[RMDB]
RNA sequence: GGGAACGACUCGAGUAGAGUCGAAAAGAUAAGCUAGCAGCAAAAAGGAACCGAUUCCCACCAAGUUCGGAAAGAGAUACCGGGCGACGCGCUGAAGAAAGAAUCUCGCUUCAGACACCCCAAGGACAUGACCUUAAAAUGUUCGCAUUUUAAGGAAGACAGUAUGCGGAUUCGUCCGCAUACUGUCAAAAGAAACAACAACAACAAC
Reactivity to 2A3 in 0.01 (KOAc 150mM, MgCl2 10mM, bicine 150mM(pH8.5), 24C), signal-to-noise 1, nucleotides 027 to 156: g050a090u180a040a030g030c020u060a000g010c030a000g000c020a000a040a100a070a000g070g030a030a010c020c000g060a090u040u060c000c000c010a020c010c050a160a010g000u030u050c060g070g000a120a150a060g070a020g000a000u080a110c000c060g020g020g000c050g020a130c050g050c000g000c070u000g000a000a010g010a010a150a010g010a100a160u090c100u030c160g020c000u000u000c010a040g040a080c000a050c000c010c020c010a020a060g020g000a030c040a090u090g030a020c020c010u000u000a010a010a010a000u000g000u000u060c220g010c090a000u000u000u000u000a000a000g000g000a000a000

Notes
Conditions: 150 mM KOAc, 10 mM MgCl2 and 150 mM bicine (pH 8.5), 24 C. Structure probing data (2A3) for a 207-nucleotide construct. 2A3 is a SHAPE reagent: it acylates the 2'-hydroxyl of flexible nucleotides of all four kinds. Values are in units of 0.01, from 0 to 300, in steps of 10. For 2A3 the reverse transcriptase was SuperScript II with manganese.